The record gives the reactivity of an RNA of 177 nucleotides to DMS and 2A3.
[RMDB]
RNA sequence: GGGAACGACUCGAGUAGAGUCGAAAACUAGGUACCGAUCGCGUCGUACUAUACUAGCAGCGUCUGUAUGAGUACGUCUGAUCAGAGACUAGCAUGCAUCAGGUACGCUAGGGAUCGAUCACGAGCGCCUGUGCAAUUGUUUCGACAAUUGCACAGGAAAAGAAACAACAACAACAAC
Reactivity to DMS in 0.01 (KOAc 150mM, MgCl2 10mM, bicine 150mM(pH8.5), 24C), signal-to-noise 4, nucleotides 027 to 126: c010u000a020g010g010u010a050c030c010g010a010u000c100g010c090g010u000c020g020u000a020c010u000a030u000a020c020u020a030g030c020a220g040c250g010u010c000u000g000u020a010u010g010a030g020u000a020c040g010u010c020u010g000a100u010c160a160g000a100g010a090c040u010a050g000c070a070u000g000c040a070u000c050a120g010g010u000a000c040g030c020u010a030g000g000g010a300u000c000g000a030u010c030a300c020g020a040g020c080g000
Reactivity to 2A3 in 0.01 (KOAc 150mM, MgCl2 10mM, bicine 150mM(pH8.5), 24C), signal-to-noise 3, nucleotides 027 to 126: c020u020a030g010g010u020a030c000c020g010a020u020c070g010c030g030u030c000g020u000a010c010u000a000u000a010c150u240a000g000c140a060g170c040g160u190c030u010g020u010a020u060g170a010g000u010a010c020g010u030c030u010g080a150u120c070a030g040a000g040a190c060u110a060g010c070a050u070g010c010a040u030c040a050g000g050u030a010c090g070c240u010a010g000g000g040a020u010c010g010a000u060c020a000c110g000a010g030c020g050
The reactions ran in a buffer of 150 mM KOAc, 10 mM MgCl2 and 150 mM bicine (pH 8.5), at 24 C. Values cover nucleotides 27 to 126. Source: RMDB library OK2TRN, as collected in RNAgym.